[RMDB]
An RNA of 177 nucleotides, treated with DMS and read out base by base. For DMS, 816 sequencing reads were counted. It was measured as part of the RMDB library OK2TRN.
RNA sequence: GGGAACGACUCGAGUAGAGUCGAAAAAUAGUCCAAGUGAAGUUCGAGUGGUGGCAGAAGGAUUUGAUUUUGCUAAUGGAAUCAACAUUUCACCCGAUGGCAAGUAUGUGAACUCUCUGAAAUGUAGAGCAAGUAGAUCGUUCGCGAUCUACUUGCUAAAAGAAACAACAACAACAAC
Reactivity to DMS in 0.01 (KOAc 150mM, MgCl2 10mM, bicine 150mM(pH8.5), 24C), signal-to-noise 1, nucleotides 027 to 126: a110u010a060g000u000c010c020a140a110g020u000g020a060a120g000u000u000c060g010a080g020u010g000g030u000g000g040c080a100g000a050a110g020g010a170u000u010u000g000a070u000u000u000u020g020c070u020a100a100u000g010g000a040a000u010c020a020a070c170a080u000u010u000c050a120c060c010c030g000a100u000g010g000c040a070a070g020u000a060u000g000u000g020a030a020c030u000c020u000c060u020g000a010a040a110u010g010u000a050g010